[RMDB]
RNA sequence: GGGAACGACUCGAGUAGAGUCGAAAAGAUAUGGAACUAGAGGCAGCUUGGAUUUACCACUAACUUGGGUCGGAAACGACCCAAGCAAUAGUGGUUGUCAGCUGCCGAUUGGUUCCUAAGUCAAAGAACAUGGUAACGUUCGCGUUACCAUGUUCAAGUACCACUAAUGGUUCGCCAUUAGUGGUACAAAAGAAACAACAACAACAAC
Reactivity to DMS in 0.01 (KOAc 150mM, MgCl2 10mM, bicine 150mM(pH8.5), 24C), signal-to-noise 2, nucleotides 027 to 156: g000a120u000a230u010g000g000a010a030c010u010a050g010a300g020g010c000a010g030c020u000u000g050g000a030u000u020u000a030c000c000a020c010u000a020a060c000u000u000g010g000g040u000c000g010g010a200a130a300c000g020a030c000c010c000a000a020g020c000a040a130u000a010g030u000g000g020u000u000g010u000c010a060g040c010u000g020c010c000g000a000u000u000g040g030u010u010c000c000u000a020a170g020u000c070a070a080a130g020a000a000c000a010u000g010g010u000a000a000c010g010u000u010c300g000c030g040u000u000a000c010c000a010u000g000u000u000c000a040a150
Reactivity to 2A3 in 0.01 (KOAc 150mM, MgCl2 10mM, bicine 150mM(pH8.5), 24C), signal-to-noise 5, nucleotides 027 to 156: g030a010u100a040u130g000g000a010a010c020u040a060g020a070g090g000c010a010g010c040u140u200g110g010a050u230u210u170a020c010c010a020c020u160a300a300c000u030u000g000g000g000u000c000g040g040a110a060a030c000g000a000c000c120c010a010a000g100c010a010a020u000a000g000u000g000g000u000u000g000u010c000a000g000c000u000g000c010c010g000a000u010u000g000g000u000u000c000c000u010a050a020g020u010c040a030a030a170g000a010a000c000a000u000g000g000u000a000a000c000g000u040u060c250g010c000g130u000u010a000c000c000a000u000g000u000u000c000a000a010
Chemical mapping of a 207-nucleotide RNA with DMS and 2A3.
For DMS the reverse transcriptase was MarathonRT.